RNA sequence: GGGAACGACUCGAGUAGAGUCGAAAAGAACACGUCUCGGGACGACGCUAAACUCGCCCUGGUCGGGAUGGGUUUAACGACCCCUCGCGUUUCCUAGUUCCUAAAACUAGGUGGUGGAGUCAUAUAAAAAACUUCUACACGUUCGCGUGUAGAAGAAGAGACUAGAAAUGUUCGCAUUUCUAGUCUCAAAAGAAACAACAACAACAAC
Reactivity to DMS in 0.01 (KOAc 150mM, MgCl2 10mM, bicine 150mM(pH8.5), 24C), signal-to-noise 1, nucleotides 027 to 156: g010a020a100c030a080c010g000u000c020u000c020g000g020g000a080c010g020a070c030g000c090u010a090a070a100c100u000c020g060c000c000c000u010g050g000u000c190g000g020g000a050u000g000g020g050u000u000u000a040a140c090g000a180c000c010c000c010u000c020g020c070g020u030u000u000c010c000u000a070g000u020u000c050c110u000a060a100a030a040c010u000a030g000g000u000g000g020u020g000g000a210g050u000c040a120u040a190u050a010a030a050a090a040a140c000u000u000c000u000a010c000a000c010g030u010u010c300g070c020g080u000g000u000a000g000a000a020g010a030a060
Reactivity to 2A3 in 0.01 (KOAc 150mM, MgCl2 10mM, bicine 150mM(pH8.5), 24C), signal-to-noise 3, nucleotides 027 to 156: g040a070a020c090a000c090g010u000c000u010c020g030g000g010a090c300g010a030c040g020c210u020a000a000a010c000u020c020g040c030c000c020u060g030g030u110c040g000g010g050a050u080g020g000g010u070u060u130a090a020c020g040a030c000c000c000c010u020c010g050c020g010u010u070u030c000c000u000a010g000u020u040c080c110u140a080a090a020a000c020u000a010g000g030u010g010g000u050g030g090a070g020u100c040a060u130a020u300a140a050a030a000a040a040c000u010u010c000u010a000c000a000c000g030u020u080c190g010c000g120u000g000u000a000g010a000a000g000a010a030
Chemical mapping of a 207-nucleotide RNA with DMS and 2A3.
The RNA was probed in 150 mM KOAc, 10 mM MgCl2 and 150 mM bicine (pH 8.5) at 24 C.
For 2A3 the reverse transcriptase was SuperScript II with manganese.
Source: RMDB library M2RFPK, as collected in RNAgym.
For 2A3, 1,928 sequencing reads were counted.
For DMS the reverse transcriptase was MarathonRT.
Values cover nucleotides 27 to 156.